Source: RMDB library M2RFPK, as collected in RNAgym. This 207-nucleotide RNA was probed chemically with 2A3. Reactivities are given for positions 27 through 156. The 2A3 profile rests on 432 reads. For 2A3 the reverse transcriptase was SuperScript II with manganese.

[RMDB]
RNA sequence: GGGAACGACUCGAGUAGAGUCGAAAAGUGUGCUAUACUAGUAAGGUUGAAUGAAUCAACCCUUGGUGCUUAGCUUCUUUCACCAAGCAUAUUACACGCGGAUAACCGCCAAAGGACAAAAGAUGAACUGCCCGACGAUUCUUCGGAAUCGUCGGAACACACCCUAAGCCUUCGGGCUUAGGGUGUGAAAAGAAACAACAACAACAAC
Reactivity to 2A3 in 0.01 (KOAc 150mM, MgCl2 10mM, bicine 150mM(pH8.5), 24C), signal-to-noise 1, nucleotides 027 to 156: g000u020g010u000g050c010u000a000u040a160c050u050a000g040u050a040a150g010g010u010u010g040a170a220u090g100a070a190u020c000a000a030c000c000c000u010u010g000g000u000g020c030u000u120a130g000c000u130u080c000u050u130u020c020a030c000c000a000a000g000c040a000u000a020u260u150a040c050a000c050g000c040g000g070a060u050a270a200c000c080g000c010c000a020a030a150g050g000a030c030a070a200a030a000g060a050u180g040a100a020c120u070g060c000c000c000g000a000c000g000a000u000u000c000u010u100c170g060g000a000a000u000c000g000u000c000g000g000a000a000